[RMDB]
RNA sequence: GGGAACGACUCGAGUAGAGUCGAAAACCAUAACAGUUCGCUGUUAUGGACUGUCGGAAUGCGGAAUAAUUAUUCGUCCGCUUACGAUUAAUACCGACUAUAAAGCGUAACACUUCGGUGUUACGAAAUCCACAUUUAUAUUCGUAUAAAUGUGGAUAAAAGAAACAACAACAACAAC
Reactivity to 2A3 in 0.01 (KOAc 150mM, MgCl2 10mM, bicine 150mM(pH8.5), 24C), signal-to-noise 9, nucleotides 027 to 126: c000c000a000u000a000a000c000a000g040u070u090c140g070c110u000g000u000u000a010u010g000g010a040c060u060g000u010c000g000g030a120a050u120g000c000g010g070a030a040u130a110a120u250u230a130u200u200c100g020u010c020c000g000c000u000u050a020c020g010a010u030u080a030a020u050a080c010c010g050a010c040u050a060u090a300a120a020g080c000g000u000a000a000c000a000c010u030u060c210g090g000u000g000u000u000a000c000g000a020a010
Reactivity to DMS in 0.01 (KOAc 150mM, MgCl2 10mM, bicine 150mM(pH8.5), 24C), signal-to-noise 9, nucleotides 027 to 126: c000c000a000u000a000a010c000a000g020u000u010c240g030c010u000g010u000u000a000u000g000g000a100c170u000g010u000c000g010g000a110a060u010g010c010g000g010a030a040u010a090a130u010u010a180u010u010c240g010u000c000c000g010c010u000u000a070c080g010a060u000u010a080a090u000a150c020c010g010a080c150u000a100u010a070a080a130g000c000g010u000a010a000c000a010c000u000u010c190g020g010u000g010u000u000a000c000g000a010a040